Source: RMDB library OK2TRN, as collected in RNAgym. This 177-nucleotide RNA was probed chemically with 2A3 and DMS. 2A3 adducts were read by reverse transcription with SuperScript II with manganese. Conditions: 150 mM KOAc, 10 mM MgCl2 and 150 mM bicine (pH 8.5), 24 C.
[RMDB]
RNA sequence: GGGAACGACUCGAGUAGAGUCGAAAAAGCCAGAUUCGUUCGGUCUCGGCUUUGCUCAGCAUGCUCAGGUCGGCCAAGGCGAUGGCGGCCAGCACCGCCAGCAGCAGCAGAUGGCAGCCGGAUCGACAGACACGCAGGAAUUCGUUCCUGCGUGUCUAAAAGAAACAACAACAACAAC
Reactivity to 2A3 in 0.01 (KOAc 150mM, MgCl2 10mM, bicine 150mM(pH8.5), 24C), signal-to-noise 2, nucleotides 027 to 126: a020g150c040c010a080g050a270u140u170c090g110u150u030c030g000g090u000c200u080c040g000g080c000u150u090u020g050c030u000c070a050g020c080a100u070g010c020u010c050a030g090g000u100c030g110g000c070c050a050a080g080g000c030g070a100u120g070g050c020g030g000c000c010a030g010c070a050c000c000g000c000c010a000g000c020a000g000c030a000g000c010a010g050a140u140g010g040c000a010g000c000c000g010g010a010u040c020g000a000c000
Reactivity to DMS in 0.01 (KOAc 150mM, MgCl2 10mM, bicine 150mM(pH8.5), 24C), signal-to-noise 2, nucleotides 027 to 126: a070g010c010c010a080g000a110u000u010c140g020u010u010c050g020g020u000c010u010c050g010g000c020u000u000u020g020c020u000c120a170g020c030a080u000g000c030u010c100a140g010g010u000c050g020g010c060c030a150a080g030g000c070g020a090u010g010g020c090g000g010c050c030a120g010c190a150c000c020g020c010c010a040g000c100a070g020c060a130g030c060a040g000a110u000g000g010c050a080g000c050c000g010g000a060u000c010g010a040c220